[RMDB]
RNA sequence: GGGAACGACUCGAGUAGAGUCGAAAAACUGCAUCUACGGAUGCAGAACUACGUUCAUCCAAUUUAUUUGGACGCAUGAAAUGAGAAUAGGGAACUGGAUUCUCAUACGCAGGCUACGGCCUGCGAAAAAACUCCUUAUGCUUCGGCAUAAGGAGAAGUUAAUUCAGCGGUUCGCCGCUGAAUUAACAAAAGAAACAACAACAACAAC
Reactivity to 2A3 in 0.01 (KOAc 150mM, MgCl2 10mM, bicine 150mM(pH8.5), 24C), signal-to-noise 2, nucleotides 027 to 156: a000c000u000g000c010a000u000c000u010a030c190g170g000a000u000g000c000a000g010a010a000c030u120a040c040g010u010u040c020a010u000c010c030a050a060u040u240u200a100u130u050u070g000g030a000c010g050c090a120u170g090a110a120a100u010g000a000g000a020a000u030a070g050g060g010a020a070c030u030g070g050a070u000u000c010u000c000a010u030a030c010g000c000a010g000g040c010u030a060c240g140g000c000c010u000g000c000g010a000a000a000a000a000a000c000u000c000c000u000u000a000u000g000c000u000u040c110g180g000c010a000u000a000a000g000g000a000g010a000a000
Reactivity to DMS in 0.01 (KOAc 150mM, MgCl2 10mM, bicine 150mM(pH8.5), 24C), signal-to-noise 1, nucleotides 027 to 156: a040c030u000g000c000a010u000c000u000a060c300g090g000a000u010g000c040a000g000a070a210c000u000a000c080g000u000u000c030a100u000c070c180a130a120u010u030u000a120u040u000u000g000g010a010c030g030c030a070u000g040a100a140a110u000g030a140g020a110a150u000a080g000g000g000a040a070c140u000g000g000a300u000u000c000u030c000a070u000a100c010g000c000a040g030g030c000u000a130c300g070g030c060c000u010g060c000g010a000a010a010a110a040a030c000u000c000c000u000u000a000u000g040c020u000u010c300g050g000c010a030u000a000a000g020g000a000g000a000a060
The record gives the reactivity of an RNA of 207 nucleotides to 2A3 and DMS. The 2A3 profile rests on 1,084 reads. For 2A3 the reverse transcriptase was SuperScript II with manganese. For DMS, 1,152 sequencing reads were counted.